[RMDB]
RNA sequence: GGGAACGACUCGAGUAGAGUCGAAAAGGGGUCCUUUCUUGUCAGGCUUGAAUACAGGCGAGGAUCGUACUGAAGCCUCCACGGUACGGGAGCCUUAAGCAAGCCUUGGAUUUAGAAAGGACGGAGGCACCCAAACUACCGAGUUCGCUCGGUAGAACCUAACAAAUUUGUUCGCAAAUUUGUUAGGAAAAGAAACAACAACAACAAC
Reactivity to DMS in 0.01 (KOAc 150mM, MgCl2 10mM, bicine 150mM(pH8.5), 24C), signal-to-noise 1, nucleotides 027 to 156: g010g000g020g000u010c010c000u000u000u010c030u020u020g010u010c030a110g000g050c010u020u000g000a080a090u010a170c300a030g000g030c000g000a100g050g020a090u000c030g020u040a040c000u010g020a040a150g020c040c000u000c010c010a300c020g020g000u010a020c020g020g010g010a090g040c010c010u000u000a050a200g010c020a030a010g010c000c030u000u000g000g010a140u010u010u000a040g020a020a010a050g010g000a020c000g030g030a040g070g030c020a150c000c000c010a080a090a210c020u000a000c000c010g000a020g020u000u000c300g000c000u000c020g010g020u010a000g000a060a220
Reactivity to 2A3 in 0.01 (KOAc 150mM, MgCl2 10mM, bicine 150mM(pH8.5), 24C), signal-to-noise 3, nucleotides 027 to 156: g070g010g060g020u000c040c010u000u000u000c010u010u050g110u060c140a090g000g020c010u020u000g010a070a040u210a200c120a070g030g000c010g050a190g020g010a010u010c000g000u000a000c010u010g040a140a020g000c000c000u000c000c000a030c000g000g010u000a000c000g000g000g000a010g010c000c020u020u020a050a010g040c000a010a000g000c000c000u000u120g030g000a010u040u150u180a010g010a010a000a000g000g010a000c030g000g000a000g000g000c000a050c010c000c000a040a080a030c000u000a000c000c010g000a010g010u090u160c260g130c100u000c000g000g000u000a000g000a000a020